[RMDB]
RNA sequence: GGGAACGACUCGAGUAGAGUCGAAAAUUGCAUCUUGGCAGGUUACAGUUGAUGCAGGGCAGUCGGGAGUUGUAACUGGACAGGGCUGUUUAUCUAAAAUAACUGAGGCUAACACUGUAAAAAUGGGCUUAUAUUUAUGAUUCGUCAUAAAUAUAAGAAAAGAAACAACAACAACAAC
Reactivity to DMS in 0.01 (KOAc 150mM, MgCl2 10mM, bicine 150mM(pH8.5), 24C), signal-to-noise 7, nucleotides 027 to 126: u000u000g020c030a040u010c050u000u010g010g020c060a060g010g020u000u000a050c070a060g010u000u000g020a080u000g010c060a050g010g000g010c050a050g010u000c070g010g010g000a100g010u000u000g010u010a070a100c080u010g000g010a070c080a080g010g010g010c050u000g000u000u000u010a050u010c080u010a070a060a080a070u010a050a080c080u010g010a090g010g010c050u000a050a090c090a040c040u000g000u000a020a040a040a080a110u000g010g010g020
Reactivity to 2A3 in 0.01 (KOAc 150mM, MgCl2 10mM, bicine 150mM(pH8.5), 24C), signal-to-noise 2, nucleotides 027 to 126: u080u070g020c010a000u020c020u060u050g060g000c030a030g070g070u070u050a070c020a040g030u060u050g100a040u040g010c060a030g000g000g010c020a010g030u030c030g040g020g010a050g010u080u050g040u050a070a040c030u020g010g030a010c010a030g000g040g000c000u010g020u030u080u040a070u000c030u070a070a060a110a120u110a050a050c050u030g030a020g070g020c000u020a030a020c050a010c040u060g050u130a060a070a010a050a060u080g010g040g010
The record gives the reactivity of an RNA of 177 nucleotides to DMS and 2A3. The RNA was probed in 150 mM KOAc, 10 mM MgCl2 and 150 mM bicine (pH 8.5) at 24 C.